[RMDB]
Notes
The record gives the reactivity of an RNA of 177 nucleotides to DMS and 2A3. It was measured as part of the RMDB library OK2TST. 2A3 adducts were read by reverse transcription with SuperScript II with manganese. Conditions: 150 mM KOAc, 10 mM MgCl2 and 150 mM bicine (pH 8.5), 24 C. For DMS the reverse transcriptase was MarathonRT. Reactivities are given for positions 27 through 126.

RNA sequence: GGGAACGACUCGAGUAGAGUCGAAAAGAAGACAUUGAUUCUUUGUCAGAAGAGAACUGUACUCGAUAUCUAAAGGGAUACGGAGUUUCCUAUGACGAAAACGAUCAAUCUCUUUGGAAAAGACAAAAUUAGCGCAUUUAUUCGUAAAUGCGCUAAUAAAAGAAACAACAACAACAAC
Reactivity to DMS in 0.01 (KOAc 150mM, MgCl2 10mM, bicine 150mM(pH8.5), 24C), signal-to-noise 4, nucleotides 027 to 126: g010a070a040g010a020c180a030u000u010g010a020u000u000c110u000u000u000g010u010c020a030g040a150a230g000a060g000a090a140c060u000g020u000a020c030u000c000g000a150u000a120u020c110u010a090a100a110g000g000g000a060u000a010c020g000g000a110g000u000u010u000c000c010u000a240u000g010a040c040g000a020a020a070a100c300g000a020u000c020a010a020u000c190u000c000u000u000u000g010g000a050a090a060a100g000a070c130a050a030a080
Reactivity to 2A3 in 0.01 (KOAc 150mM, MgCl2 10mM, bicine 150mM(pH8.5), 24C), signal-to-noise 2, nucleotides 027 to 126: g020a010a000g000a000c030a030u020u020g010a020u040u080c020u050u050u030g020u010c000a020g010a050a020g040a040g010a040a030c010u040g030u080a010c000u010c020g070a070u040a120u220c110u130a140a080a030g050g000g000a020u000a060c040g040g060a150g050u040u020u000c010c000u030a080u040g010a020c020g000a030a000a020a030c090g010a010u010c000a000a000u010c000u000c000u050u020u010g030g010a060a070a010a010g070a030c060a020a130a020